[RMDB]
RNA sequence: GGGAACGACUCGAGUAGAGUCGAAAACAAGAACAGGAUUUAAUGAAAGCAGCUUAAAUCAACAUGCCCUGCACUCAACAACCAGCCCUGUAUUGAAAUGUGAGCUGACAAGUUCCUCAGCACUUUGGUUAGGUUUGUGGAAACAGUGAAGUCAGAAACGCCUAUUAGUAUUCGUACUAAUAGGCGUAAAAGAAACAACAACAACAAC
Reactivity to 2A3 in 0.01 (KOAc 150mM, MgCl2 10mM, bicine 150mM(pH8.5), 24C), signal-to-noise 2, nucleotides 027 to 156: c030a020a030g080a050a040c030a070g010g070a030u050u110u220a100a050u150g080a190a060a000g000c020a000g010c010u070u090a010a030a010u170c050a030a040c020a090u070g020c010c000c000u000g000c020a000c010u060c010a000a110c000a020a060c060c030a030g030c000c010c020u060g050u100a130u010u090g080a080a070a010u060g070u100g040a030g000c010u000g030a060c020a040a050g020u020u030c020c000u050c010a000g050c010a060c010u040u060u040g050g020u040u050a030g030g060u070u060u080g060u020g030g060a010a050a050c000a000g030u020g150a070a020g040u100c000a000g100a210a050
Reactivity to DMS in 0.01 (KOAc 150mM, MgCl2 10mM, bicine 150mM(pH8.5), 24C), signal-to-noise 2, nucleotides 027 to 156: c040a070a110g010a030a090c050a100g030g040a100u000u010u000a090a090u010g010a060a160a260g020c060a080g000c090u010u010a040a050a100u010c010a050a130c060a100u010g020c010c020c000u000g000c030a070c060u000c060a060a120c010a030a060c050c020a080g040c020c010c010u020g010u010a070u000u000g010a040a060a100u000g040u000g030a070g030c000u020g020a120c080a050a130g010u000u000c000c020u010c030a060g020c010a040c040u010u020u000g020g020u000u000a050g030g010u000u000u010g030u000g000g010a110a060a070c010a070g000u000g010a070a040g030u010c060a060g010a110a130